[RMDB]
RNA sequence: GGGAACGACUCGAGUAGAGUCGAAAAAGCGGUCAAGAGAGGGUGCUUCUCUCAGCCCUCUCACUGGGAAAUCUUUCUCUGGAAUCCCGAUAGGUUGUAGAGACUAGGGAGUGUUAUGGAGGGCUAACCAAAACAGUACGUUCGCGUACUGUUUUGGAAAAGAAACAACAACAACAAC
Reactivity to DMS in 0.01 (KOAc 150mM, MgCl2 10mM, bicine 150mM(pH8.5), 24C), signal-to-noise 3, nucleotides 027 to 126: a040g010c080g020g000u000c090a100a100g020a060g020a010g000g000g040u010g000c110u010u000c030u000c010u010c030a300g010c000c000c010u010c000u000c060a050c080u020g000g010g000a050a070a140u010c110u000u000u000c010u000c030u000g000g010a130a130u000c020c020c050g010a130u010a080g010g020u000u000g000u000a080g000a120g010a040c120u000a090g000g010g020a070g020u020g010u000u010a130u000g000g010a060g000g000g000c110u000a070a180
An RNA of 177 nucleotides, treated with DMS and read out base by base.